[RMDB]
RNA sequence: GGGAACGACUCGAGUAGAGUCGAAAAGCUCUGGAAUUGAGGCCCCUCUAACAAUAAUCCAAAACUACUUCGCAGAGUAAUCUGACGAAUCGUAGGAUGCCCAUUACUAUCUAUUUUUGGAGCAUCUAAAACUGUCAGUGCUUCGGCACUGACAGAAGUGAGUUAUGCAGUUCGCUGCAUAACUCACAAAAGAAACAACAACAACAAC
Reactivity to 2A3 in 0.01 (KOAc 150mM, MgCl2 10mM, bicine 150mM(pH8.5), 24C), signal-to-noise 1, nucleotides 027 to 156: g050c000u000c040u050g040g110a100a100u130u070g010a070g000g050c000c030c000c000u070c130u150a080a050c040a060a120u200a040a000u090c070c010a030a040a040a100c010u010a000c030u000u000c000g010c000a000g000a020g080u140a040a190u000c000u000g080a100c010g000a000a000u050c080g010u010a020g040g030a000u000g010c000c000c000a040u080u060a060c050u110a140u260c060u080a180u160u040u010u000u020g040g000a080g040c010a000u000c010u050a020a020a020a200c000u000g000u010c000a000g000u000g000c000u040u040c080g010g000c000a000c000u000g000a000c000a000g000a030a000